This 177-nucleotide RNA was probed chemically with DMS and 2A3.
The 2A3 profile rests on 3,300 reads.
The data come from the RNA Mapping Database (RMDB), library TTRDEL.
Values cover nucleotides 27 to 126.
DMS adducts were read by reverse transcription with MarathonRT.
Conditions: 150 mM KOAc, 10 mM MgCl2 and 150 mM bicine (pH 8.5), 24 C.
[RMDB]
RNA sequence: GGGAACGACUCGAGUAGAGUCGAAAAGAUAUGGAUGAGAACUACAAGUCACGUCUCGAAGAACUCGGAAACGAGGGAGAGACUCGACUUGCUCAUCCUAAGUCAAAGCUGAUGUUCGCAUCAGCAAGCUACUGAAAAUCUUCGGAUUUUCAGUAGCAAAAGAAACAACAACAACAAC
Reactivity to DMS in 0.01 (KOAc 150mM, MgCl2 10mM, bicine 150mM(pH8.5), 24C), signal-to-noise 2, nucleotides 027 to 126: g000a010u000a300u040g000g000a010u000g010a000g000a050a030c090u000a300c020a010a000g010u000c020a070c120g030u010c000u000c010g010a080a090g000a140a260c030u000c010g000g020a130a080a210c010g010a020g000g000g020a040g000a070g010a010c000u010c110g030a000c020u000u000g010c000u000c000a020u000c000c010u000a010a030g010u000c020a060a050a190g000c000u020g000a010u000g000u000u000c230g000c040a000u000c000a000g000c000a060a060
Reactivity to 2A3 in 0.01 (KOAc 150mM, MgCl2 10mM, bicine 150mM(pH8.5), 24C), signal-to-noise 2, nucleotides 027 to 126: g040a020u130a050u150g000g010a000u060g070a000g020a070a060c110u170a050c300a000a010g000u010c010a010c150g000u000c000u010c020g140a240a070g000a060a040c010u030c020g030g000a070a050a030c000g000a000g010g010g000a050g000a000g000a000c000u030c040g000a010c020u000u010g010c010u000c000a000u000c000c000u030a090a020g020u000c060a090a030a100g010c000u010g030a020u010g030u070u150c300g010c130a020u020c000a000g000c000a000a030